[RMDB]
RNA sequence: GGGAACGACUCGAGUAGAGUCGAAAAGAUAUGGACGUGUACGUGGACGAAGAACUCGGAAACGAGGGAGUCCGUACUGCGUCCUAAGUCAAACAGUUCUGUUUAUCUUCGGAUAAACAGAACUGAACAUUGCGUUAUGGUUCGCCAUAACGCAAUGAAAAGAAACAACAACAACAAC
Reactivity to 2A3 in 0.01 (KOAc 150mM, MgCl2 10mM, bicine 150mM(pH8.5), 24C), signal-to-noise 3, nucleotides 027 to 126: g040a020u070a040u180g010g000a000c030g040u020g010u050a050c120g110u170g100g050a000c000g140a300a100g020a070a020c010u000c010g010g040a070a080a080c030g010a000g000g000g010a020g000u000c000c000g000u020a000c030u100g010c020g000u000c000c000u000a030a000g040u030c040a180a000a000c000a000g000u000u000c000u000g000u000u010u000a000u020c010u050u080c300g170g000a000u000a000a000a000c000a010g000a000a000c010u010g000a010a010
Reactivity to DMS in 0.01 (KOAc 150mM, MgCl2 10mM, bicine 150mM(pH8.5), 24C), signal-to-noise 4, nucleotides 027 to 126: g010a050u000a300u000g000g000a000c000g050u010g010u010a010c030g000u010g020g020a010c000g020a110a150g000a130a200c000u000c000g010g010a100a080a200c010g010a010g000g000g000a090g010u000c010c010g000u000a000c000u000g050c010g000u000c010c000u010a030a090g000u000c040a160a080a280c010a010g000u000u000c000u000g000u000u010u000a010u000c000u000u000c230g020g000a020u000a000a000a000c000a000g000a010a010c000u010g000a080a190
An RNA of 177 nucleotides, treated with 2A3 and DMS and read out base by base.
The DMS profile rests on 4,932 reads.
The 2A3 profile rests on 8,564 reads.
The reactions ran in a buffer of 150 mM KOAc, 10 mM MgCl2 and 150 mM bicine (pH 8.5), at 24 C.
Values are in units of 0.01, from 0 to 300, in steps of 10.
High DMS reactivity at an A or C suggests that its Watson-Crick edge is free.